An RNA of 177 nucleotides, treated with DMS and 2A3 and read out base by base. 2A3 is a SHAPE reagent: it acylates the 2'-hydroxyl of flexible nucleotides of all four kinds. Conditions: 150 mM KOAc, 10 mM MgCl2 and 150 mM bicine (pH 8.5), 24 C. For DMS the reverse transcriptase was MarathonRT. It was measured as part of the RMDB library 15KREP.

RNA sequence: GGGAACGACUCGAGUAGAGUCGAAAACAAGAUGUCUAUAAGAGUCUUACCAUAGUUGACAUUCCACAGAGUUUGACUUUUUCAUAUGAUGGGUUACGUGGCGCAAUACGUAAAGCUAAAGAUUAUGCAUAAUCUUGCGGUUCGCCGCAAGAUUAUGAAAAGAAACAACAACAACAAC
Reactivity to DMS in 0.01 (KOAc 150mM, MgCl2 10mM, bicine 150mM(pH8.5), 24C), signal-to-noise 2, nucleotides 027 to 126: c260a130a180g030a030u010g010u000c050u000a050u030a030a300g010a000g010u000c000u010u020a160c030c010a080u010a030g000u010u000g010a110c160a070u010u000c040c090a090c130a060g010a090g010u020u000u000g010a070c060u000u000u000u020u000c020a020u010a050u000g000a100u000g000g000g000u000u000a030c040g000u010g000g000c100g030c120a040a050u010a020c050g020u000a010a070a100g030c090u000a050a050a090g010a090u020u020a020u000g000
Reactivity to 2A3 in 0.01 (KOAc 150mM, MgCl2 10mM, bicine 150mM(pH8.5), 24C), signal-to-noise 1, nucleotides 027 to 126: c010a020a020g040a030u170g160u300c010u010a020u020a080a040g010a000g010u010c000u040u040a030c000c000a010u070a050g050u010u160g030a010c030a060u010u130c040c020a080c030a100g100a000g020u020u030u020g030a020c000u080u060u020u140u080c010a020u000a010u030g100a030u000g070g110g000u000u000a010c020g000u000g060g120c080g000c140a000a080u080a050c060g050u000a020a010a020g110c020u030a080a060a000g080a020u170u110a020u100g040